[RMDB]
RNA sequence: GGGAACGACUCGAGUAGAGUCGAAAACGCAUUGGCGCAGGCCACCGGCGAGGUUUCCGACAGGCCGUAGCCCUCGGUGAUGUGGCAGCCCGUCAUGUGCUGCCAGCGCUCCGCGACGGGGCGCUGACUCAUAGUACCGUUUCGACGGUACUAUGAGAAAAGAAACAACAACAACAAC
Reactivity to DMS in 0.01 (KOAc 150mM, MgCl2 10mM, bicine 150mM(pH8.5), 24C), signal-to-noise 8, nucleotides 027 to 126: c080g010c030a060u010u000g020g000c030g000c120a210g010g010c010c010a030c070c040g010g000c020g010a070g020g010u000u010u010c070c040g000a140c170a110g010g010c110c050g000u000a130g010c090c010c020u000c020g000g000u000g000a110u010g030u000g010g010c010a060g010c070c110c030g010u000c080a050u010g020u000g010c030u000g000c040c010a010g010c000g010c000u000c000c000g020c270g000a120c130g010g010g000g010c000g000c010u000g000a140
Reactivity to 2A3 in 0.01 (KOAc 150mM, MgCl2 10mM, bicine 150mM(pH8.5), 24C), signal-to-noise 6, nucleotides 027 to 126: c020g030c030a040u050u130g030g030c020g040c110a060g110g110c020c000a030c030c020g120g030c010g030a080g000g040u020u080u070c050c020g040a070c070a140g100g060c040c010g000u010a020g030c010c010c010u030c020g260g230u070g020a200u150g010u030g020g020c010a020g050c030c020c010g050u080c040a070u120g030u050g040c040u040g040c000c000a000g000c000g000c000u000c000c010g050c080g190a140c190g010g000g000g010c000g000c000u000g020a010
The record gives the reactivity of an RNA of 177 nucleotides to DMS and 2A3. DMS (dimethyl sulfate) methylates the pairing face of unpaired adenines and cytosines. Conditions: 150 mM KOAc, 10 mM MgCl2 and 150 mM bicine (pH 8.5), 24 C. The data come from the RNA Mapping Database (RMDB), library OK2TST.